[RMDB]
RNA sequence: GGGAACGACUCGAGUAGAGUCGAAAAGAUAUGGACCAAUCCGUUACAGCAAUGACGAAUAGAUUUAGAGCUCGGAAACGAGCUCUAAAUCUAUUUAAGACAGCUGAACGGAGUUGGUCCUAAGUCAGGAUAAAAUGAUGUUCGCAUCAUUUUAUCCAAAAGAAACAACAACAACAAC
Reactivity to DMS in 0.01 (KOAc 150mM, MgCl2 10mM, bicine 150mM(pH8.5), 24C), signal-to-noise 2, nucleotides 027 to 126: g010a060u000a300u000g000g000a000c000c000a010a030u000c000c000g010u000u000a150c010a000g010c010a080a100u010g020a180c300g010a000a000u000a000g000a030u000u000u000a010g010a000g040c010u000c000g000g020a070a110a240c010g030a020g020c010u000c010u000a000a000a000u000c000u000a000u000u000u000a100a230g010a250c110a090g010c010u010g020a040a000c010g000g010a000g030u010u010g000g010u000c000c010u000a000a040g000u000c060a160

An RNA of 177 nucleotides, treated with DMS and read out base by base. Conditions: 150 mM KOAc, 10 mM MgCl2 and 150 mM bicine (pH 8.5), 24 C. The data come from the RNA Mapping Database (RMDB), library TTRINS.